Annotation:
Chemical mapping of a 177-nucleotide RNA with 2A3 and DMS. The data come from the RNA Mapping Database (RMDB), libraries RFM100 and RFMREP. The reactions ran in a buffer of 150 mM KOAc, 10 mM MgCl2 and 150 mM bicine (pH 8.5), at 24 C.
[RMDB]
RNA sequence: GGGAACGACUCGAGUAGAGUCGAAAACCGUAUGAUUACAAACUUCGCUGAUACCUGCCCACCCGAAAGCUCAGAGACUAGGAGUGGGGUCCCGGUUGAGGACGGCGCUGACAACGGUGGGAACCAUCUAAGUAAUGGAGUUCGCUCCAUUACUUAGAAAAGAAACAACAACAACAAC
Reactivity to 2A3 in 0.01 (KOAc 150mM, MgCl2 10mM, bicine 150mM(pH8.5), 24C), signal-to-noise 9, nucleotides 027 to 126: c010c000g020u100a160u180g160a180u160u200a090c080a050a120a040c040u060u050c040g020c040u030g010a040u050a130c010c010u060g040c000c000c000a010c000c010c000g080a120a050a010g010c020u040c080a060g050a020g020a180c030u060a060g020g040a090g030u030g010g010g000g000u040c000c010c010g090g030u040u100g030a060g020g020a010c000g010g010c030g000c030u040g020a030c020a050a020c050g010g010u030g020g020g000a030a020c020c000a010u010
Reactivity to DMS in 0.01 (KOAc 150mM, MgCl2 10mM, bicine 150mM(pH8.5), 24C), signal-to-noise 4, nucleotides 027 to 126: c020c000g020u000a050u010g020a130u020u020a080c110a090a140a140c060u000u000c030g030c020u010g010a070u020a050c040c010u000g000c000c010c010a040c030c020c020g000a060a130a110g020c030u000c110a120g010a150g010a060c040u010a110g000g020a070g040u010g000g000g000g010u000c040c050c070g000g000u000u000g010a140g020g000a080c090g000g020c090g000c060u000g000a080c100a060a080c120g000g040u000g010g000g000a070a060c040c040a130u010